This 207-nucleotide RNA was probed chemically with 2A3 and DMS.
Source: RMDB library OK3TST, as collected in RNAgym.
RNA sequence: GGGAACGACUCGAGUAGAGUCGAAAAAAUUGACAGUAACAGAGGAAUGGCUGUAAUUUGGGAAAUCCAGAAUUAAUUUAUGCACAGGAUCCAUUUACAUGCUACCUAAUGCAUUGCUCAUUGAAAGUCCUACUUCAGCUUCAGAGCCCUAACCUCACAGGCAUUAUAUGUUCGCAUAUAAUGCCUGAAAAGAAACAACAACAACAAC
Reactivity to 2A3 in 0.01 (KOAc 150mM, MgCl2 10mM, bicine 150mM(pH8.5), 24C), signal-to-noise 2, nucleotides 027 to 156: a000a000u130u110g040a000c040a020g020u040a170a000c000a020g060a020g100g000a050a090u140g020g010c010u010g000u010a030a060u020u010u010g010g010g020a070a240a070u000c010c000a030g080a010a020u070u100a090a040u130u220u160a080u160g060c070a060c000a050g020g000a020u010c020c000a000u000u010u020a020c030a040u230g000c000u070a130c000c010u130a110a020u060g000c010a030u010u140g000c010u010c040a070u010u080g040a090a030a010g010u030c010c000u030a070c000u040u040c040a020g020c010u020u010c000a030g010a030g040c020c020c000u070a070a050c030c000u030c000a030
Reactivity to DMS in 0.01 (KOAc 150mM, MgCl2 10mM, bicine 150mM(pH8.5), 24C), signal-to-noise 2, nucleotides 027 to 156: a030a030u000u000g030a100c020a090g050u010a060a110c050a080g010a110g000g000a130a130u020g030g020c000u010g030u000a000a060u000u000u010g020g020g000a050a120a130u000c020c020a110g000a110a160u010u000a060a150u000u020u010a040u010g000c080a090c070a110g030g020a020u000c040c020a010u000u000u010a050c020a020u010g020c020u010a110c020c010u000a030a070u010g030c050a020u000u010g010c100u000c030a070u010u010g000a110a060a130g010u010c020c010u000a050c050u010u000c030a070g000c030u010u000c040a090g020a130g000c020c010c030u010a040a070c050c010u000c040a210
Reactivities are given for positions 27 through 156. For 2A3, 1,245 sequencing reads were counted.